Structure probing data (2A3 and DMS) for a 177-nucleotide construct. Source: RMDB library OK2TRN, as collected in RNAgym. The 2A3 profile rests on 12,930 reads.

RNA sequence: GGGAACGACUCGAGUAGAGUCGAAAAUGAUCGAGAGAUCUAAUUAUGUACGCGAGUCAAGUGCACAGACUCGAGCGAAAGCUCGGUCGAAAGACCGCGUACAUGCUGCGGCAAGUGUACAGUCGAACAUUUAGUCACUGUUCGCAGUGACUAAAUGAAAAGAAACAACAACAACAAC
Reactivity to 2A3 in 0.01 (KOAc 150mM, MgCl2 10mM, bicine 150mM(pH8.5), 24C), signal-to-noise 5, nucleotides 027 to 126: u110g000a000u020c020g000a010g010a010g000a100u010c000u020a080a080u190u200a020u040g000u000a000c000g000c010g010a020g020u010c020a180a130g050u030g080c040a010c010a020g010a000c010u020c080g010a000g000c010g060a110a010a000g010c000u000c000g010g000u000c000g000a020a030a010g000a000c000c000g010c010g000u000a000c000a000u010g000c020u090g040c010g010g000c030a130a260g000u000g000u040a020c010a010g010u010c020g020a070a030
Reactivity to DMS in 0.01 (KOAc 150mM, MgCl2 10mM, bicine 150mM(pH8.5), 24C), signal-to-noise 9, nucleotides 027 to 126: u010g010a010u000c000g010a280g000a230g000a010u000c000u010a090a110u000u000a040u000g010u000a010c000g020c000g010a040g010u000c000a040a070g020u000g000c040a030c040a300g000a010c000u000c010g010a010g020c000g000a140a100a180g000c000u000c000g010g000u000c000g000a100a080a130g000a020c000c000g010c000g010u000a010c000a000u000g010c240u000g010c030g010g000c020a040a050g010u000g010u000a010c010a300g000u000c020g010a110a290

Background
DMS (dimethyl sulfate) methylates the pairing face of unpaired adenines and cytosines.